[RMDB]
RNA sequence: GGGAACGACUCGAGUAGAGUCGAAAAAAAGUCGGUCACGAAACGCUUGAUAUCGUCGUUGAGCGCGGCGCAGAUCGUGGGAUCGGAGUAGAAACGGUGAAAGGGGACGACGAUGCAGUAUUCGGCGAGGAUCUUGGGCGCCGUGAUAGCGCAGCAGACCUAAGCCCAAAUUCGUUUGGGCUUAGGUAAAAGAAACAACAACAACAAC
Reactivity to 2A3 in 0.01 (KOAc 150mM, MgCl2 10mM, bicine 150mM(pH8.5), 24C), signal-to-noise 2, nucleotides 027 to 156: a000a000a000g140u110c010g010g020u020c000a000c080g010a070a120a050c020g050c010u050u160g020a020u060a010u140c090g020u000c010g000u040u080g050a040g030c020g000c000g100g000c010g000c040a000g010a180u030c040g050u070g000g060g000a050u040c030g010g000a000g000u040a010g020a090a100a050c070g040g040u080g000a100a050a030g020g030g000g000a000c050g020a030c020g020a030u050g030c010a000g010u110a150u090u100c010g030g020c050g000a030g090g000a050u020c040u070u070g070g030g000c030g020c020c010g000u000g000a020u060a050g040c050g000c070a060g020c010a010g010
Reactivity to DMS in 0.01 (KOAc 150mM, MgCl2 10mM, bicine 150mM(pH8.5), 24C), signal-to-noise 2, nucleotides 027 to 156: a090a060a060g000u000c000g060g010u010c020a010c060g030a150a050a070c050g000c010u020u080g000a030u010a050u010c070g000u000c010g030u000u010g010a070g040c040g020c010g030g010c000g030c020a110g000a030u000c030g020u000g030g020g010a090u000c020g020g020a110g020u000a090g000a080a090a050c080g010g020u010g020a050a090a110g020g020g000g000a050c040g020a060c000g010a040u020g000c030a150g020u000a150u010u000c030g000g000c040g050a130g020g000a030u010c050u000u010g020g010g020c040g010c020c040g060u010g020a080u000a050g040c040g000c020a140g040c090a160g020

Overview: Structure probing data (2A3 and DMS) for a 207-nucleotide construct. For DMS the reverse transcriptase was MarathonRT. For 2A3 the reverse transcriptase was SuperScript II with manganese. For DMS, 3,329 sequencing reads were counted. Reactivities are given for positions 27 through 156. It was measured as part of the RMDB library OK3TST. The RNA was probed in 150 mM KOAc, 10 mM MgCl2 and 150 mM bicine (pH 8.5) at 24 C. High DMS reactivity at an A or C suggests that its Watson-Crick edge is free.